An RNA of 177 nucleotides, treated with DMS and 2A3 and read out base by base. It was measured as part of the RMDB library OK1LIB. The RNA was probed in 150 mM KOAc, 10 mM MgCl2 and 150 mM bicine (pH 8.5) at 24 C. The DMS profile rests on 17,351 reads.
RNA sequence: GGGAACGACUCGAGUAGAGUCGAAAAGCCUGAAUUUUGGGGAAAAGGAUUAGCAACUGAAGGCGCAAAGGCAACGUUGAAGUUAGCAGAAGAACAUCAAAUAUACGAUGUCUAUAGUUUUACAGCAUACGACAUAGUAGUUCGCUACUAUGUCGUAAAAAGAAACAACAACAACAAC
Reactivity to DMS in 0.01 (KOAc 150mM, MgCl2 10mM, bicine 150mM(pH8.5), 24C), signal-to-noise 7, nucleotides 027 to 126: g010c000c000u020g010a060a040u010u020u010u000g000g000g010g000a070a030a080a090g000g000a080u010u020a080g000c070a040a040c040u010g000a110a090g010g010c040g000c070a030a050a060g010g010c060a080a080c140g010u010u000g000a060a150g000u000u010a090g010c090a080g000a110a060g010a070a040c030a020u010c010a050a080a090u040a110u040a100c220g010a010u010g000u010c030u000a060u010a090g000u010u000u010u010a100c120a080g000c210a160
Reactivity to 2A3 in 0.01 (KOAc 150mM, MgCl2 10mM, bicine 150mM(pH8.5), 24C), signal-to-noise 6, nucleotides 027 to 126: g060c000c010u020g030a100a100u090u090u060u140g020g000g000g040a000a080a020a010g080g010a060u110u090a040g030c020a020a070c010u070g030a080a010g040g000c000g000c060a080a020a030g040g000c030a050a020c100g010u030u090g020a030a030g020u040u100a040g040c030a010g050a160a010g010a040a090c010a010u040c030a020a190a020u230a040u040a150c130g010a010u030g010u000c020u030a070u050a050g060u040u010u060u070a060c050a010g030c010a030